RNA sequence: GGGAACGACUCGAGUAGAGUCGAAAACGCUGGGCUCGUAACAUCCCGCACUUUGAUCGAACUGAAGCGCGCACGGUUCGGGAGUGCGGUGGAGCCUGUGCUGAAGCGCGCACGGCAACCGAAAGGUGCGAAACUGACAGGCUUCGGCCUGUCAGAAUCCUACAGUUAGGUUCGCCUAACUGUAGGAAAAAGAAACAACAACAACAAC
Reactivity to DMS in 0.01 (KOAc 150mM, MgCl2 10mM, bicine 150mM(pH8.5), 24C), signal-to-noise 1, nucleotides 027 to 156: c020g030c000u000g030g050g010c000u010c010g060u000a060a130c140a160u000c100c000c000g030c000a010c040u020u040u000g000a160u010c030g010a070a060c030u000g010a060a040g030c000g060c020g000c020a300c040g000g020u020u000c000g030g020g000a080g010u000g020c000g030g010u020g030g000a050g030c010c020u000g050u000g020c000u000g000a100a070g010c030g040c030g060c000a280c020g000g000c010a110a090c020c010g000a030a140a150g010g000u000g000c030g010a070a110a210c020u010g000a030c010a030g030g000c000u000u000c140g030g000c000c000u020g060u000c010a010g020a070a100
Reactivity to 2A3 in 0.01 (KOAc 150mM, MgCl2 10mM, bicine 150mM(pH8.5), 24C), signal-to-noise 4, nucleotides 027 to 156: c040g000c010u020g000g000g000c000u000c010g050u100a090a060c030a140u190c000c010c000g090c010a010c010u240u130u110g140a140u240c010g000a000a000c000u040g030a240a030g030c000g000c000g000c000a010c000g010g000u020u010c010g030g000g000a010g010u010g010c020g000g030u060g010g000a000g010c000c010u010g010u050g030c020u110g040a120a040g010c000g000c010g010c010a020c000g050g000c030a090a080c020c000g040a080a040a060g010g010u030g000c030g040a130a080a060c000u010g000a000c000a000g000g020c010u060u160c270g140g000c020c000u000g000u000c000a010g000a000a010